[RMDB]
RNA sequence: GGGAACGACUCGAGUAGAGUCGAAAAAGACUUGUAUUCGUACAAGUCUACAGAAAUAUCGCUAGCACACGAUCACACCUAGCGUUCUCAAUAACGAUCGAACAACGUGUCAAUUCGUUGACACGAAUUACCUCCUUGUAUUCGUACAAGGAGGUAAAAAAGAAACAACAACAACAAC
Reactivity to 2A3 in 0.01 (KOAc 150mM, MgCl2 10mM, bicine 150mM(pH8.5), 24C), signal-to-noise 7, nucleotides 027 to 126: a000g000a000c000u010u000g000u010a020u040u090c240g010u040a000c000a000a000g000u000c000u010a020c020a030g270a030a130a010u210a040u050c020g000c000u000a010g000c060a040c020a010c140g020a020u020c010a030c020a050c080c020u000a010g000c010g010u020u010c020u000c000a040a090u150a080a050c080g010a030u020c020g050a090a030c040a050a050c020g000u000g000u000c000a020a020u050u060c170g060u090u000g000a000c000a000c010g000a000a000
Reactivity to DMS in 0.01 (KOAc 150mM, MgCl2 10mM, bicine 150mM(pH8.5), 24C), signal-to-noise 6, nucleotides 027 to 126: a030g010a010c000u000u000g010u010a010u010u020c190g020u000a000c000a010a010g010u000c000u010a070c200a080g010a100a110a080u010a060u010c010g010c000u000a010g000c260a090c170a080c030g010a020u000c010a150c260a130c210c000u000a010g000c000g020u000u000c010u000c010a100a030u000a040a080c180g000a000u010c010g020a120a080c240a050a190c010g010u000g000u000c010a020a020u000u010c150g010u000u000g000a000c010a020c010g010a040a050